[RMDB]
RNA sequence: GGGAACGACUCGAGUAGAGUCGAAAAGAUAUGGAUGUGGGUGCAGGUCUUAUACUUCGAUAAGUCGUGUGUCGGAAACGACAUUCGACUUUUGACGAAGUAAGACCUGCACCCACAUCCUAAGUCAGUAUGCUCAAAUGUUCGCAUUUGAGCAUACAAAAGAAACAACAACAACAAC
Reactivity to DMS in 0.01 (KOAc 150mM, MgCl2 10mM, bicine 150mM(pH8.5), 24C), signal-to-noise 2, nucleotides 027 to 126: g020a070u010a300u010g020g010a000u000g030u000g010g000g050u020g020c020a020g010g020u010c000u010u020a120u000a070c010u000u000c000g020a110u000a020a010g020u000c020g000u000g000u000g000u000c010g000g000a170a100a250c040g030a020c010a010u010u010c030g020a000c000u000u000u000u000g000a170c140g010a020a010g010u010a010a000g000a020c000c000u010g020c000a000c000c010c000a000c000a000u000c000c000u000a000a070g000u000c060a220
Structure probing data (DMS) for a 177-nucleotide construct. Source: RMDB library TTRINS, as collected in RNAgym. For DMS the reverse transcriptase was MarathonRT.